RNA sequence: GGGAACGACUCGAGUAGAGUCGAAAAGAUAUGGACCCAGAACUACAUACGUAGCUCAUCGAUCCCGAUUUGUUAUCGGAAACGAUAACAAAUCGGGGGAGAGCGAGGUAUGCUGGGUCCUAAGUCAGAAUGAAUGUCAGUUCGCUGACAUUCAUUCAAAAGAAACAACAACAACAAC
Reactivity to 2A3 in 0.01 (KOAc 150mM, MgCl2 10mM, bicine 150mM(pH8.5), 24C), signal-to-noise 2, nucleotides 027 to 126: g050a030u120a060u230g020g000a010c000c020c010a000g030a140a130c300u300a040c060a010u000a010c010g100u030a000g000c010u010c020a300u300c070g050a030u020c000c000c000g000a010u000u070u010g000u010u000a000u020c010g000g060a040a040a030c020g000a000u000a000a000c000a000a000a010u000c000g000g000g000g000g000a020g000a000g020c000g000a040g000g130u010a000u020g030c010u020g010g030g000u000c000c000u000a010a010g000u000c010a030
Reactivity to DMS in 0.01 (KOAc 150mM, MgCl2 10mM, bicine 150mM(pH8.5), 24C), signal-to-noise 2, nucleotides 027 to 126: g000a050u020a300u010g000g000a020c010c000c000a000g000a140a040c100u050a300c000a000u010a000c010g000u000a300g000c000u000c000a270u000c300g030a080u020c010c000c000g000a010u000u010u010g000u000u000a000u000c010g000g000a070a120a210c000g000a020u010a010a000c000a000a010a000u010c010g010g000g000g000g000a010g020a000g020c000g000a090g000g000u000a020u000g010c000u000g000g020g030u000c000c010u010a010a100g010u000c060a190
Structure probing data (2A3 and DMS) for a 177-nucleotide construct. The reactions ran in a buffer of 150 mM KOAc, 10 mM MgCl2 and 150 mM bicine (pH 8.5), at 24 C. The DMS profile rests on 2,059 reads. It was measured as part of the RMDB library TTRINS. The 2A3 profile rests on 4,684 reads.